[RMDB]
RNA sequence: GGGAACGACUCGAGUAGAGUCGAAAAGAUAUGGACCCCAUAGAGCCGAGCUCUGAACUACGAGCCGAGGGUCGGAAACGACCCGAAGUCUCGCAGAGCGUUUGACGCUCUAUGGGGUCCUAAGUCACAGAUAAAUGUUGUUCGCAACAUUUAUCUGAAAAGAAACAACAACAACAAC
Reactivity to DMS in 0.01 (KOAc 150mM, MgCl2 10mM, bicine 150mM(pH8.5), 24C), signal-to-noise 4, nucleotides 027 to 126: g030a020u000a100u010g000g000a040c010c010c010c030a000u000a010g010a010g050c020c090g000a180g020c010u000c000u020g020a140a080c190u000a300c010g000a000g000c060c010g010a300g000g020g010u000c000g010g000a010a030a070c000g010a000c000c000c010g000a080a100g000u010c010u000c010g010c000a020g000a020g000c000g000u000u000u000g030a260c290g010c000u000c010u000a000u000g010g010g010g000u000c000c000u000a000a040g000u000c010a300

Source: RMDB library TTRINS, as collected in RNAgym. Chemical mapping of a 177-nucleotide RNA with DMS. The RNA was probed in 150 mM KOAc, 10 mM MgCl2 and 150 mM bicine (pH 8.5) at 24 C. DMS adducts were read by reverse transcription with MarathonRT.